[RMDB]
RNA sequence: GGGAACGACUCGAGUAGAGUCGAAAAGAGUAUGAAGGCGCUGGGCUUCGUACUACAUUUGACCUCAAUGACAUUGAUAACACCUACAUACUUGAGGGUGAUGUAGAAAUCCUAAUGUCUCCGACAAUGCUAGACGGGGUUACGGAUAUGCCGCAGCGAGUCCAUCCUCAUUCGUGAGGAUGGACUCAAAAGAAACAACAACAACAAC
Reactivity to 2A3 in 0.01 (KOAc 150mM, MgCl2 10mM, bicine 150mM(pH8.5), 24C), signal-to-noise 2, nucleotides 027 to 156: g040a000g020u140a040u170g090a030a000g060g010c000g000c040u050g050g000g000c000u030u040c000g050u050a140c010u000a000c000a010u000u000u210g240a200c020c000u030c030a010a010u130g040a050c020a110u040u070g020a010u110a180a070c060a080c020c040u100a050c010a070u070a000c020u000u010g000a030g000g070g020u050g020a010u000g000u000a000g030a040a080a010u060c020c030u140a080a000u080g110u040c020u000c070c010g080a100c080a090a120u160g080c130u090a030g000a080c000g000g020g000g000u010u010a020c050g080g000a040u100a010u110g020c020c010g110c010a000g030c000